[RMDB]
RNA sequence: GGGAACGACUCGAGUAGAGUCGAAAACCCUGAAGGCAUGAUCACCCCGUCCGAUGCGGAAGUUCGUGCUUCCGUCGAACGCGAAAGUCGGACGGCGGCCAUGAGUCGCAACGCAAAGCCGCGGCAAUAAGCUCGUCGUCGUUCGCGACGACGAGAAGAAAGUAGUGUAGUUCGCUACACUACUUUCAAAAGAAACAACAACAACAAC
Reactivity to 2A3 in 0.01 (KOAc 150mM, MgCl2 10mM, bicine 150mM(pH8.5), 24C), signal-to-noise 5, nucleotides 027 to 156: c000c000c000u010g120a180a070g040g000c010a000u020g000a010u090c050a050c010c000c000c000g010u000c000c000g020a010u050g010c010g020g040a020a000g010u160u300c260g140u300g100c000u010u000c010c000g000u020c020g070a150a070c060g010c030g170a130a060a010g040u020c000g010g000a010c000g000g000c010g000g000c000c000a010u030g020a020g030u010c000g000c030a070a090c080g050c150a090a110a040g020c030c020g000c020g010g000c000a030a070u150a150a020g020c000u010c000g000u000c000g000u000c020g000u080u090c190g010c010g110a000c000g000a000c000g010a000g000a000a010
Reactivity to DMS in 0.01 (KOAc 150mM, MgCl2 10mM, bicine 150mM(pH8.5), 24C), signal-to-noise 1, nucleotides 027 to 156: c000c000c040u000g000a170a080g010g000c020a010u000g010a090u000c060a150c000c010c010c020g000u010c030c020g000a060u000g000c030g030g010a010a050g000u010u000c200g020u000g040c020u000u000c010c020g000u000c050g020a050a140c110g000c050g020a150a150a100g010u000c010g010g030a060c000g010g010c020g010g020c020c020a080u020g000a100g020u000c000g060c020a020a060c030g030c030a080a160a230g010c030c010g060c000g010g000c040a070a110u000a090a100g000c020u000c000g000u010c000g010u000c010g000u000u000c220g050c060g010a070c000g000a000c000g000a010g020a030a080